The record gives the reactivity of an RNA of 177 nucleotides to 2A3 and DMS.
Conditions: 150 mM KOAc, 10 mM MgCl2 and 150 mM bicine (pH 8.5), 24 C.
The 2A3 profile rests on 1,578 reads.
For DMS the reverse transcriptase was MarathonRT.
2A3 adducts were read by reverse transcription with SuperScript II with manganese.
[RMDB]
RNA sequence: GGGAACGACUCGAGUAGAGUCGAAAAAGAUCGUACAAACCCGGUAAAGCCACAGGCCGCGCAGCGGUGAACCGGUUCGCACUGUACGCCGUCCGCAAGGGACUAGGGUUCGAGGUCGAAGAGAGACGGUACACAGUCUAUUCGUAGACUGUGUACCAAAAGAAACAACAACAACAAC
Reactivity to 2A3 in 0.01 (KOAc 150mM, MgCl2 10mM, bicine 150mM(pH8.5), 24C), signal-to-noise 1, nucleotides 027 to 126: a000g030a050u060c030g000u070a040c010a010a090a030c040c000c020g000g010u120a170a100a000g050c020c010a070c030a090g080g000c070c030g000c040g010c070a070g000c030g070g030u080g070a020a000c040c030g050g000u000u070c040g000c030a040c030u020g010u070a010c040g010c000c000g040u040c000c000g060c110a070a070g140g000g030a060c040u070a050g040g000g040u000u040c030g060a080g010g010u000c020g040a080a010g080a010g000a020g030a030c100
Reactivity to DMS in 0.01 (KOAc 150mM, MgCl2 10mM, bicine 150mM(pH8.5), 24C), signal-to-noise 3, nucleotides 027 to 126: a150g000a050u000c030g000u000a070c000a300a050a140c080c020c000g010g000u000a110a090a280g020c010c080a040c070a070g000g000c050c060g000c100g000c120a070g000c030g010g000u000g000a120a080c070c040g000g000u000u000c110g000c060a070c090u000g000u000a070c130g030c020c050g020u000c030c040g000c170a090a140g020g020g000a020c040u010a080g000g030g020u000u000c020g000a100g000g010u000c010g010a120a090g010a060g000a140g000a100c120